[RMDB]
RNA sequence: GGGAACGACUCGAGUAGAGUCGAAAACUCGCUGUUUUUGUGGCUGGCUUACAGCGGGCUGGAGGAGCCGGGAGCGGAGGCGGAGGACCGAGCCAAAAACGUCAGCCGAGGCCGGGCGGCCCCGCUCAAAAUCUUCGUAUCUUCGGAUACGAAGAAAGUAUAAAUCAAGGUUCGCCUUGAUUUAUACAAAAGAAACAACAACAACAAC
Reactivity to 2A3 in 0.01 (KOAc 150mM, MgCl2 10mM, bicine 150mM(pH8.5), 24C), signal-to-noise 1, nucleotides 027 to 156: c000u010c010g000c030u030g010u090u120u030u130u090g060u040g060g000c060u010g000g000c040u080u100a010c040a020g020c020g020g000g040c030u030g020g120a070g020g030a030g050c060c000g040g050g010a010g000c020g040g010a110g080g010c050g070g050a120g040g000a020c000c030g030a040g010c010c010a130a110a040a000a000c050g030u050c040a020g010c000c000g030a020g000g060c000c070g010g010g010c000g010g020c000c050c030c040g030c010u030c020a100a170a040a050u000c000u000u000c000g000u000a000u000c000u020u000c070g080g000a000u000a000c000g000a000a000g000a000a000a000